Structure probing data (2A3) for a 207-nucleotide construct. The reactions ran in a buffer of 150 mM KOAc, 10 mM MgCl2 and 150 mM bicine (pH 8.5), at 24 C.
[RMDB]
RNA sequence: GGGAACGACUCGAGUAGAGUCGAAAAGACUGAUGUAGAGUUCGGUUGGAGCGACAAGUAUUUAGCUUGAGAUAGCUAAAUCACCUCGGUAUGAUUAGGGUCAGACCUAGGAACCGUAGGGGUAUUCAAUGCUGUAUUGCGUUCGCGCAAUACAGAAGUUGAGAUCAAACUUCGGUUUGAUCUCAACAAAAGAAACAACAACAACAAC
Reactivity to 2A3 in 0.01 (KOAc 150mM, MgCl2 10mM, bicine 150mM(pH8.5), 24C), signal-to-noise 1, nucleotides 027 to 156: g030a030c060u040g060a020u110g040u160a050g020a010g090u080u040c030g050g010u010u060g020g060a050g040c060g140a060c040a070a000g040u120a120u010u010u000a000g000c030u020u040g020a030g000a100u090a000g010c000u000a000a000a000u000c000a010c030c030u030c040g010g000u300a270u100g070a030u000u010a030g020g000g030u100c040a020g050a120c010c000u000a000g000g020a030a010c000c000g000u030a020g010g000g020g000u000a040u040u250c130a060a110u170g010c010u010g000u000a000u000u020g000c010g010u030u010c120g000c000g000c050a000a000u000a000c000a000g000a010a020
Reactivities are given for positions 27 through 156. For 2A3, 729 sequencing reads were counted.